[RMDB]
RNA sequence: GGGAACGACUCGAGUAGAGUCGAAAAUUGUGAGGCAAAAAGCAGAAAGCCCCGAAGUUAAUUCUCAUUAACCACGAGGCUUGAUCUGUAUGCCUAGACAACAUCAGAUUAGCCGCUUACCUGCCGACAUGUGUACUACCUUCGGGUAGUACACAUGAAAAGAAACAACAACAACAAC
Reactivity to DMS in 0.01 (KOAc 150mM, MgCl2 10mM, bicine 150mM(pH8.5), 24C), signal-to-noise 1, nucleotides 027 to 126: u020u000g010u000g000a080g000g000c010a010a010a170a100a100g020c000a040g000a220a100a120g000c000c010c030c000g000a230a100g000u000u000a000a030u000u020c200u010c230a070u020u000a010a000c060c090a220c050g020a040g000g000c000u000u000g040a090u000c000u000g040u000a090u000g010c010c030u000a070g000a120c270a060a060c070a050u000c020a010g010a070u000u000a110g010c040c070g030c090u000u020a070c100c010u010g000c020c020g020a170

Chemical mapping of a 177-nucleotide RNA with DMS. It was measured as part of the RMDB library RFMREP.